[RMDB]
RNA sequence: GGGAACGACUCGAGUAGAGUCGAAAAUUCUUCUGUACACACCCAGGUAAGGAAUGUCAAGGUUAAUCAUGAAGGUAAAGGUGCAGCGGAGGAGCCUUUGAAGGACAGGCCAAUAAAAGAUCAGUGAAAAUCCUUGUCUACAGAUAAAUAAAAAAUACGAUUAAAAUCCAUUCGUGGAUUUUAAUCGAAAAGAAACAACAACAACAAC
Reactivity to 2A3 in 0.01 (KOAc 150mM, MgCl2 10mM, bicine 150mM(pH8.5), 24C), signal-to-noise 2, nucleotides 027 to 156: u060u000c020u010u070c010u000g140u070a060c040a020c000a010c130c000c000a010g000g030u020a030a080g020g000a070a090u120g000u070c020a000a040g100g000u040u090a040a000u080c030a040u170g030a070a040g000g000u040a030a040a050g040g000u020g030c080a010g000c060g060g000a060g030g000a000g000c010c000u050u060u170g070a060a020g000g010a030c040a030g000g060c010c000a060a020u090a150a050a020a000g070a060u100c050a040g060u000g060a030a080a000a000u060c010c020u070u050g050u080c010u040a030c010a000g090a040u120a070a190a050u220a010a120a180a000a040a180u300a040